[RMDB]
Record summary:
This 177-nucleotide RNA was probed chemically with DMS and 2A3. The RNA was probed in 150 mM KOAc, 10 mM MgCl2 and 150 mM bicine (pH 8.5) at 24 C. Reactivities are given for positions 27 through 126.
RNA sequence: GGGAACGACUCGAGUAGAGUCGAAAACUUUGGUGAGACCCUAUCUAGUAUAGCAAUCCACCAAGCAGGUGAGUUCACACAAUUCAGGUUCUCAAAGAAAAUGCGCCCUGACUUGACAGGUAUGGUCCCGUAGGUACGUGUUCGCACGUACCUACGGAAAAGAAACAACAACAACAAC
Reactivity to DMS in 0.01 (KOAc 150mM, MgCl2 10mM, bicine 150mM(pH8.5), 24C), signal-to-noise 2, nucleotides 027 to 126: c070u000u000u010g060g030u000g040a030g060a160c300c300c000u000a000u000c040u000a190g000u030a010u000a120g000c030a040a150u030c070c000a010c000c010a030a020g000c300a160g010g000u000g000a160g020u000u000c110a110c000a190c130a010a040u000u020c000a010g000g030u000u000c030u050c060a000a120a120g090a040a190a140a090u000g000c100g000c300c000c000u000g000a040c070u000u000g000a090c030a070g030g010u010a010u000g000g030u040c020
Reactivity to 2A3 in 0.01 (KOAc 150mM, MgCl2 10mM, bicine 150mM(pH8.5), 24C), signal-to-noise 1, nucleotides 027 to 126: c000u040u030u150g020g010u080g030a130g000a000c040c000c000u000a010u000c060u050a120g030u110a020u000a020g000c020a000a010u000c000c000a000c000c000a000a000g070c100a040g070g000u010g020a120g000u050u030c000a010c000a020c000a090a030u150u040c050a040g000g050u100u000c040u000c000a100a100a030g080a050a080a010a080u160g000c000g000c020c000c000u000g020a030c030u110u160g000a020c000a040g000g000u080a100u160g030g000u020c000